[RMDB]
Description:
The record gives the reactivity of an RNA of 177 nucleotides to 2A3 and DMS. The RNA was probed in 150 mM KOAc, 10 mM MgCl2 and 150 mM bicine (pH 8.5) at 24 C.
RNA sequence: GGGAACGACUCGAGUAGAGUCGAAAAUGGCGUGAGCCUGAGUGAAACGGCCUUUAGUGCAGAUCUUGGUGGUAGUAGCAAAUAUUCAAAUGCGAACUUUGAAGACUGAAGUGGAGAAAGGUUCCGUCCACUUGUAAUUAUUCGUAAUUACAAGUGGAAAAGAAACAACAACAACAAC
Reactivity to 2A3 in 0.01 (KOAc 150mM, MgCl2 10mM, bicine 150mM(pH8.5), 24C), signal-to-noise 9, nucleotides 027 to 126: u110g030g000c030g020u090g030a020g020c000c020u020g040a040g030u100g050a080a060a040c050g030g020c000c000u070u130u110a120g030u110g070c040a020g020a160u020c020u050u070g060g000u030g050g020u040a040g010u030a020g020c040a030a070a050u160a110u120u140c050a040a050a050u090g030c020g030a030a010c020u050u040u080g040a050a010g020a020c020u040g040a080a030g060u060g050g060a060g050a040a070a020g060g000u050u030c020c000g020u000
Reactivity to DMS in 0.01 (KOAc 150mM, MgCl2 10mM, bicine 150mM(pH8.5), 24C), signal-to-noise 8, nucleotides 027 to 126: u010g010g000c020g010u020g010a150g020c010c010u010g010a110g010u010g000a070a080a130c120g010g000c060c030u000u020u000a070g030u000g010c050a060g010a050u000c040u000u000g010g020u000g000g020u010a060g020u010a090g010c060a030a050a100u010a120u010u010c100a040a050a080u010g010c090g000a060a080c090u000u000u010g000a050a060g000a070c090u000g010a060a080g010u010g000g010a070g000a070a080a080g000g000u000u010c010c020g010u010